Structure probing data (DMS) for a 177-nucleotide construct.
The data come from the RNA Mapping Database (RMDB), library M2PK50.
For DMS, 726 sequencing reads were counted.
DMS adducts were read by reverse transcription with MarathonRT.
[RMDB]
RNA sequence: GGGAACGACUCGAGUAGAGUCGAAAAUUACCCGGCUUCGGCCGGGUAAACAGCAGAGCCGUCGCGAAGGAUGCCGGCUACUCAAGGGUUGUUCCCACGCGAGAAACGGGUCGUUCGCGACCCGUAACCAUAGGCUUCUUUUCGAAGAAGCCUAUGGAAAAGAAACAACAACAACAAC
Reactivity to DMS in 0.01 (KOAc 150mM, MgCl2 10mM, bicine 150mM(pH8.5), 24C), signal-to-noise 1, nucleotides 027 to 126: u000u000a010c000c000c030g020g000c000u000u020c280g000g030c000c000g030g020g010u000a000a000a030c120a080g010c110a060g010a150g000c020c020g000u060c000g030c030g000a130a050g010g020a090u010g030c080c040g000g000c010u000a010c020u000c020a100a180g020g000g000u000u000g000u010u000c000c000c000a050c230g040c230g010a100g030a080a110a020c010g010g000g000u000c010g010u000u020c190g020c000g020a020c000c000c000g020u000a000a080